[RMDB]
RNA sequence: GGGAACGACUCGAGUAGAGUCGAAAACUUCGGAUGCCCAGGUCGGACCGCGAGGAGGUGGAGAUGCCAUGCCGACCCGAAGAGGAAAGAAGGACGCGAGACGGUGAACCUGUGAGUGGAAGCCCGCCAAGCUUCGACUUCGGUCGAAGCAAAAGAAACAACAACAACAAC
Reactivity to 2A3 in 0.01 (KOAc 150mM, MgCl2 10mM, bicine 150mM(pH8.5), 24C), signal-to-noise 3, nucleotides 027 to 129: c000u020u000c030g030g000a020u120g040c040c000c000a020g030g070u020c020g060g040a100c030c050g000c020g020a030g010g000a000g000g020u050g030g010a070g000a020u120g080c040c000a090u120g020c000c000g010a010c000c000c000g020a030a040g030a000g040g010a010a060a020g020a000a020g040g000a030c000g030c010g000a060g000a020c040g030g020u070g020a020a020c000c010u080g010u060g060a010g010u020g010g020a020a000g010c000c000c000g020c030c020a030a030
Reactivity to DMS in 0.01 (KOAc 150mM, MgCl2 10mM, bicine 150mM(pH8.5), 24C), signal-to-noise 2, nucleotides 027 to 129: c040u000u040c090g010g050a060u030g040c060c040c050a040g070g100u010c060g080g020a120c050c040g030c090g030a110g020g010a030g020g000u060g000g000a000g020a050u030g030c130c060a030u020g010c020c000g010a000c030c050c070g050a090a030g010a030g010g010a050a100a060g010a030a020g000g000a090c060g010c180g030a070g030a080c000g040g000u070g030a040a050c000c000u050g010u020g000a040g030u050g030g010a130a080g010c020c010c050g000c140c040a090a170